[RMDB]
This 177-nucleotide RNA was probed chemically with 2A3 and DMS.

RNA sequence: GGGAACGACUCGAGUAGAGUCGAAAAGAUAUGGAGAGUAGGGAGAAGAGUGUCGGAAACGACACGACUUCGAGGAUCUACCUCCUAAGUCAAAAGUAGACAAAUAUCUUCGGAUAUUUGUCUACAAGCUAUCAUAGUCGUUCGCGACUAUGAUAGCAAAAGAAACAACAACAACAAC
Reactivity to 2A3 in 0.01 (KOAc 150mM, MgCl2 10mM, bicine 150mM(pH8.5), 24C), signal-to-noise 2, nucleotides 027 to 126: g000a010u060a000u120g010g010a030g010a050g010u010a010g000g000g000a020g000a020a000g020a020g000u000g000u000c010g030g030a060a050a000c000g010a000c000a000c010g300a210c030u000u000c000g060a220g010g010a000u000c000u000a000c000c000u000c010c000u010a160a010g040u020c010a020a010a030a220g020u000a000g000a000c020a010a000a010u010a010u020c030u140u180c300g030g000a000u000a000u000u000u000g000u000c000u000a000c000a000a000
Reactivity to DMS in 0.01 (KOAc 150mM, MgCl2 10mM, bicine 150mM(pH8.5), 24C), signal-to-noise 2, nucleotides 027 to 126: g000a030u000a300u010g010g000a010g010a200g020u000a000g000g000g000a030g030a000a030g010a300g000u000g010u000c010g010g000a060a040a100c000g000a000c000a010c000g010a070c000u000u000c010g000a120g000g010a030u010c000u000a000c000c000u000c010c010u010a010a090g000u000c030a060a070a130a120g000u000a000g010a030c000a000a000a020u000a000u000c010u000u020c170g030g000a030u000a000u000u010u000g000u000c000u000a000c020a090a080
The RNA was probed in 150 mM KOAc, 10 mM MgCl2 and 150 mM bicine (pH 8.5) at 24 C.
High DMS reactivity at an A or C suggests that its Watson-Crick edge is free.